The record gives the reactivity of an RNA of 177 nucleotides to 2A3 and DMS. It was measured as part of the RMDB libraries RFM100 and RFMREP. For 2A3 the reverse transcriptase was SuperScript II with manganese. Reactivities are given for positions 27 through 126.
[RMDB]
RNA sequence: GGGAACGACUCGAGUAGAGUCGAAAAGCUUGUGGAAACACAGUUGUGGCCGAGUUAAUAGCCCUGGGUAUAGUAACAAUGUUGAAUAUGACUCUUAAUUGAGGAAAUGGGUGAUCCGCAGCCAAAUCGCUUUAUGUAAGUUCGCUUACAUAAAGCGAAAAGAAACAACAACAACAAC
Reactivity to 2A3 in 0.01 (KOAc 150mM, MgCl2 10mM, bicine 150mM(pH8.5), 24C), signal-to-noise 4, nucleotides 027 to 126: g060c070u090u060g040u010g050g030a010a020a000c020a020c000a030g030u110u070g030u030g020g000c010c010g010a020g070u070u140a150a030u070a110g060c000c000c000u010g030g000g030u070a070u060a090g220u080a090a030c020a040a080u170g060u070u080g070a070a120u070a060u150g090a080c000u000c000u030u170a150a070u300u100g020a010g000g030a030a070a060u130g030g000g000u050g000a030u020c020c000g000c020a000g010c000c000a040a020a050u020
Reactivity to DMS in 0.01 (KOAc 150mM, MgCl2 10mM, bicine 150mM(pH8.5), 24C), signal-to-noise 3, nucleotides 027 to 126: g040c050u000u020g060u000g000g000a100a070a140c020a030c030a090g030u000u000g000u000g000g040c020c030g010a090g030u000u020a060a050u000a140g020c020c020c010u010g000g000g050u000a030u000a130g010u000a090a030c090a060a080u010g010u000u000g010a080a090u000a080u030g000a200c020u000c000u000u010a020a240u030u020g000a020g010g020a040a030a080u000g030g000g010u010g000a040u000c060c030g000c030a110g000c030c040a050a100a080u010